[RMDB]
RNA sequence: GGGAACGACUCGAGUAGAGUCGAAAACGACUUACCUUCGGGUAAGUCGACAUAGGUGAGUUCAUCGGAUAGCUGCCUAGGUGAGUUCAUCGGAAAGCUGCCACAUGUAACGGUUCGCCGUUACAAACAGACUAGUGUGUUUCGACACACUAGUCUGAAAAGAAACAACAACAACAAC
Reactivity to DMS in 0.01 (KOAc 150mM, MgCl2 10mM, bicine 150mM(pH8.5), 24C), signal-to-noise 3, nucleotides 027 to 126: c020g010a010c000u010u000a000c000c000u000u010c190g000g010g030u000a000a010g010u000c000g010a030c110a040u000a090g010g020u000g000a030g010u000u000c010a020u010c020g000g010a100u000a100g010c110u000g000c040c020u010a180g020g020u000g000a050g000u000u010c000a010u000c020g000g000a080a060a110g010c100u000g020c030c030a140c180a110u010g000u000a000a020c000g000g010u000u000c210g020c000c000g000u000u000a010c010a040a070a120
Reactivity to 2A3 in 0.01 (KOAc 150mM, MgCl2 10mM, bicine 150mM(pH8.5), 24C), signal-to-noise 4, nucleotides 027 to 126: c000g010a000c010u000u000a010c010c000u020u080c240g050g020g000u010a000a000g000u000c010g000a000c010a080u160a060g000g000u020g040a030g010u030u040c010a030u030c050g070g020a090u070a120g080c100u120g080c050c030u050a100g040g000u010g010a030g020u020u040c010a010u020c010g010g050a110a040a000g050c060u110g060c010c020a070c020a120u110g000u010a000a000c010g000g040u040u060c160g030c060c000g000u000u000a000c000a000a010a000